RNA sequence: GGGAACGACUCGAGUAGAGUCGAAAACUUCUGCCAGUAAUGCCUGUCGCUGACGCUGUAAAUCCGGUCCGGUUAGCGAAAUUGUGCCGUGGCGAUUAACCACCCGGUGCCAGGGUAAGGUGCUGCCACGUAACGUCAGUUUCGACUGACGUUACGUAAAAGAAACAACAACAACAAC
Reactivity to 2A3 in 0.01 (KOAc 150mM, MgCl2 10mM, bicine 150mM(pH8.5), 24C), signal-to-noise 2, nucleotides 027 to 126: c000u040u020c030u140g040c010c000a030g010u110a080a040u140g020c000c010u080g020u040c010g030c040u040g010a010c000g020c050u070g070u140a030a100a070u040c040c000g050g080u100c050c060g120g040u010u020a010g010c000g060a060a090a090u180u130g050u050g020c000c050g050u050g000g010c050g020a050u110u080a050a020c030c000a050c050c000c000g020g020u070g030c050c060a070g030g020g020u040a070a030g020g010u030g040c030u030g030c020c020
Reactivity to DMS in 0.01 (KOAc 150mM, MgCl2 10mM, bicine 150mM(pH8.5), 24C), signal-to-noise 4, nucleotides 027 to 126: c090u000u010c050u010g010c050c050a090g010u000a070a070u000g000c040c010u010g010u000c060g020c030u010g000a070c050g000c030u000g020u010a050a080a080u010c100c020g020g010u000c100c060g020g000u000u000a040g000c020g010a040a060a120u010u000g030u010g000c050c040g020u010g010g010c010g000a100u020u030a140a100c070c020a110c020c000c020g010g000u010g010c090c090a100g000g000g010u020a090a070g020g020u000g010c120u010g010c050c060